[RMDB]
RNA sequence: GGGAACGACUCGAGUAGAGUCGAAAACAACAGGGAGGUUGGUGGUGGACGAGCCACUCGCCAACCGGGUCAGGUCCGGAAGGAAGCAGCCCUAACGAGCCAGGCUCGGGUCGCCGUGCCAGUACAAUGCACAAUCAGACUUCGGUCUGAUUGUGCAAAAAGAAACAACAACAACAAC
Reactivity to DMS in 0.01 (KOAc 150mM, MgCl2 10mM, bicine 150mM(pH8.5), 24C), signal-to-noise 1, nucleotides 027 to 126: c040a130a140c070a130g000g000g000a280g000g010u000u000g000g000u000g020g040u000g030g010a120c140g020a070g050c030c000a100c050u000c060g030c000c010a110a180c040c060g010g010g080u000c020a290g040g000u000c000c000g010g080a060a100g010g000a020a010g000c060a290g000c010c000c000u000a150a100c100g000a050g010c020c080a120g020g020c000u000c030g020g080g000u000c050g000c000c000g000u030g000c030c040a100g020u010a040c080a070a080
This 177-nucleotide RNA was probed chemically with DMS.
The data come from the RNA Mapping Database (RMDB), library M2PK90.
For DMS, 552 sequencing reads were counted.
Reactivities are given for positions 27 through 126.
The reactions ran in a buffer of 150 mM KOAc, 10 mM MgCl2 and 150 mM bicine (pH 8.5), at 24 C.